[RMDB]
RNA sequence: GGGAACGACUCGAGUAGAGUCGAAAAGAUAUGGAGCGAGCUUGGACCUGGCGGUCGGAAACGACCGUCCAGCUAGCUUACUCCUAAGUCAAACAUGAAGAUGCUUCUUCGGAAGCAUCUUCAUGAACAAAUGUCCAAGGUUCGCCUUGGACAUUUGAAAAGAAACAACAACAACAAC
Reactivity to 2A3 in 0.01 (KOAc 150mM, MgCl2 10mM, bicine 150mM(pH8.5), 24C), signal-to-noise 1, nucleotides 027 to 126: g020a010u050a010u220g000g000a000g030c030g010a000g030c050u300u300g060g130a300c080c000u000g010g000c000g000g000u000c020g060g010a090a120a060c020g010a010c020c010g110u080c030c010a010g000c000u020a000g000c000u000u020a040c000u000c030c000u000a090a000g050u000c050a130a100a260c010a020u020g000a000a000g020a000u000g020c000u010u010c000u060u070c300g090g000a000a000g000c010a000u020c000u010u000c010a000u000g000a000a000
Reactivity to DMS in 0.01 (KOAc 150mM, MgCl2 10mM, bicine 150mM(pH8.5), 24C), signal-to-noise 1, nucleotides 027 to 126: g010a030u000a300u000g000g020a010g020c010g020a000g030c020u010u010g130g020a300c300c000u010g000g000c000g000g000u000c000g000g000a060a060a130c000g010a000c000c000g000u000c000c000a000g030c060u000a000g000c000u000u010a060c000u000c020c000u010a020a110g010u000c010a130a090a280c000a000u000g000a010a010g010a010u000g010c000u000u000c000u000u040c180g000g000a010a000g010c000a000u000c000u000u000c000a000u000g000a060a210

Chemical mapping of a 177-nucleotide RNA with 2A3 and DMS. It was measured as part of the RMDB library TTRDEL. Conditions: 150 mM KOAc, 10 mM MgCl2 and 150 mM bicine (pH 8.5), 24 C. For DMS, 978 sequencing reads were counted.